[RMDB]
RNA sequence: GGGAACGACUCGAGUAGAGUCGAAAAUAGUAAUAAACCUCAUUUGUCGUGAAGAUAGCUUUCUGUUAAGCUGCCAUGAAGUCUUCAAACUUAUUUUUCUCAGUGACAAAUGAUGAUAAGGCUGUGGCAUGUCGCAAUUUCUUAACUUUGGGCAAAAUCCGUAAUCCAUGUUCGCAUGGAUUACGGAAAAAGAAACAACAACAACAAC
Reactivity to DMS in 0.01 (KOAc 150mM, MgCl2 10mM, bicine 150mM(pH8.5), 24C), signal-to-noise 1, nucleotides 027 to 156: u020a090g030u000a080a080u000a060a140a120c080c050u000c010a020u010u010u010g010u000c010g020u000g030a050a090g000a070u000a040g010c030u000u010u000c040u000g000u020u000a010a040g020c080u010g020c050c080a040u010g000a100a080g000u020c010u000u000c140a090a140a040c110u010u010a130u010u000u020u000u000c020u010c120a250g040u010g010a000c010a020a020a030u000g000a000u010g000a070u000a050a100g020g010c030u000g000u000g030g020c000a150u010g020u000c050g000c020a090a170u000u000u010c020u000u000a070a120c050u000u020u000g010g010g030c030a060a070a030a130
Reactivity to 2A3 in 0.01 (KOAc 150mM, MgCl2 10mM, bicine 150mM(pH8.5), 24C), signal-to-noise 1, nucleotides 027 to 156: u070a000g130u040a010a050u120a150a300a050c000c080u020c070a070u000u060u030g020u000c020g020u040g110a100a110g040a180u070a150g030c030u060u000u050c050u040g040u050u000a000a000g010c000u000g060c010c010a030u070g020a060a030g040u000c020u030u050c010a020a020a000c020u080u090a120u210u150u000u040u000c030u010c070a070g050u080g060a010c000a010a010a010u000g040a070u060g030a070u010a200a000g060g000c010u040g000u000g000g000c010a020u070g040u140c050g000c090a030a060u150u030u000c010u010u040a050a040c010u030u050u060g000g010g010c090a130a070a000a070

Chemical mapping of a 207-nucleotide RNA with DMS and 2A3. It was measured as part of the RMDB library OK3TST. Values are in units of 0.01, from 0 to 300, in steps of 10. The RNA was probed in 150 mM KOAc, 10 mM MgCl2 and 150 mM bicine (pH 8.5) at 24 C. DMS adducts were read by reverse transcription with MarathonRT.